Source information:
This 207-nucleotide RNA was probed chemically with DMS and 2A3. The 2A3 profile rests on 1,993 reads. Reactivities are given for positions 27 through 156. For DMS the reverse transcriptase was MarathonRT.
RNA sequence: GGGAACGACUCGAGUAGAGUCGAAAACUCUGACCUUGAUUCUCUGUGACAGAGGAGCCGUGAGCUGUGGCUCCCAGCCAUUCUGGGCGGCCACUUGCACUGCUCAGCCUAGAUGAGGUGUGUCCGAGGCAGUUUUACACACUGUAGCAUCAGCCUGAUACGACCAAGAAUUCGUUCUUGGUCGUAUAAAAGAAACAACAACAACAAC
Reactivity to DMS in 0.01 (KOAc 150mM, MgCl2 10mM, bicine 150mM(pH8.5), 24C), signal-to-noise 2, nucleotides 027 to 156: c050u000c020u010g010a090c010c020u000u010g000a130u000u000c010u000c010u010g000u010g020a120c070a130g030a090g030g020a020g000c020c010g020u000g020a080g060c050u000g020u020g020g020c020u000c010c020c000a040g020c200c210a170u000u010c020u010g010g010g020c090g020g040c000c030a010c020u000u000g000c010a080c050u020g040c000u000c000a150g000c040c020u000a100g000a090u010g010a180g000g020u000g020u000g020u000c050c050g000a130g030g010c010a070g000u000u000u000u010a080c070a100c070a050c060u000g020u000a120g040c050a070u010c050a080g010c020c000u010g010
Reactivity to 2A3 in 0.01 (KOAc 150mM, MgCl2 10mM, bicine 150mM(pH8.5), 24C), signal-to-noise 3, nucleotides 027 to 156: c030u000c030u040g080a100c010c010u040u100g040a040u200u050c030u000c010u060g150u090g100a070c050a050g050a040g030g070a000g010c020c020g030u030g020a030g040c110u020g010u010g010g010c000u020c000c000c010a000g020c070c060a090u250u100c010u040g010g030g030c070g040g000c030c000a000c000u000u090g030c000a010c020u020g010c000u000c010a000g000c000c010u080a090g000a100u050g060a030g020g030u030g000u010g020u000c040c040g030a060g000g050c010a010g010u040u000u050u130a020c050a000c000a020c020u060g040u110a040g050c030a040u090c020a010g050c030c030u060g000
The RNA was probed in 150 mM KOAc, 10 mM MgCl2 and 150 mM bicine (pH 8.5) at 24 C. 2A3 adducts were read by reverse transcription with SuperScript II with manganese.